[RMDB]
RNA sequence: GGGAACGACUCGAGUAGAGUCGAAAAGGCGAAUGAACGCGGCACAGUCCAAACCGAAGCCUUCGGGCAAUGUGGUGUUCGGACUGACUUUCAUCGUUUGACCGUUCGUGUGAAGUCUCCUGAAACGUUGUAUAAUGGAUUUCGAUCCAUUAUACAAAAAAGAAACAACAACAACAAC
Reactivity to 2A3 in 0.01 (KOAc 150mM, MgCl2 10mM, bicine 150mM(pH8.5), 24C), signal-to-noise 9, nucleotides 027 to 126: g040g000c020g040a050a060u050g020a040a010c030g010c070g160g010c080a030c010a130g000u000c010c000a060a020a000c010c000g030a050a010g010c000c000u030u050c180g050g000g000c020a030a060u170g090u250g070g020u070g130u110u100c070g000g000a000c000u000g000a010c010u030u090u050c030a060u030c020g050u040u050u150g050a050c020c020g020u040u030c040g000u040g030u040g100a070a040g030u010c030u010c040c010u030g050a090a060a020c080g060
Reactivity to DMS in 0.01 (KOAc 150mM, MgCl2 10mM, bicine 150mM(pH8.5), 24C), signal-to-noise 9, nucleotides 027 to 126: g010g010c010g010a060a040u000g010a030a020c300g020c160g010g010c140a210c020a010g000u000c000c010a060a140a020c000c010g000a170a180g000c000c000u000u040c180g020g010g020c000a040a030u030g030u030g000g010u010g010u010u020c170g010g000a020c010u000g000a110c050u000u010u000c040a040u010c050g010u000u010u000g000a130c060c030g000u010u000c080g010u010g000u010g000a100a130g000u000c040u000c020c020u000g010a080a080a090c220g010